RNA sequence: GGGAACGACUCGAGUAGAGUCGAAAAGAUAUGGAGGCAGGCGACGAUCGUCUGGGUCGGAAACGACCUGACGGGAGCCUGCUCCUAAGUCAAAAUCUCAGUAAUCACUUCGGUGAUUACUGAGAAACUAAACCAGUAAGUUCGCUUACUGGUUUAGAAAAGAAACAACAACAACAAC
Reactivity to 2A3 in 0.01 (KOAc 150mM, MgCl2 10mM, bicine 150mM(pH8.5), 24C), signal-to-noise 5, nucleotides 027 to 126: g020a020u070a070u180g030g010a050g170g280c020a010g010g000c020g020a300c040g020a210u030c010g030u030c150u180g030g000g010u000c010g030g020a070a070a030c010g000a000c010c010u010g010a000c000g000g020g000a010g000c000c010u000g000c000u000c000c000u010a030a010g040u010c050a060a070a100a300u040c000u000c000a010g000u000a000a010u000c000a010c010u050u130c300g100g000u000g000a000u000u000a000c000u000g000a000g010a000a000a000
Reactivity to DMS in 0.01 (KOAc 150mM, MgCl2 10mM, bicine 150mM(pH8.5), 24C), signal-to-noise 7, nucleotides 027 to 126: g000a040u010a300u010g000g000a030g010g020c000a010g000g010c000g010a060c250g000a050u010c000g000u000c000u010g030g000g000u000c000g000g000a080a080a210c000g010a010c000c000u000g000a010c000g000g000g000a050g010c000c010u000g000c000u000c000c000u000a040a190g000u000c030a070a080a120a140u000c000u000c000a000g010u000a000a000u000c000a010c000u000u010c180g020g010u000g000a010u000u000a000c000u000g000a000g000a010a040a120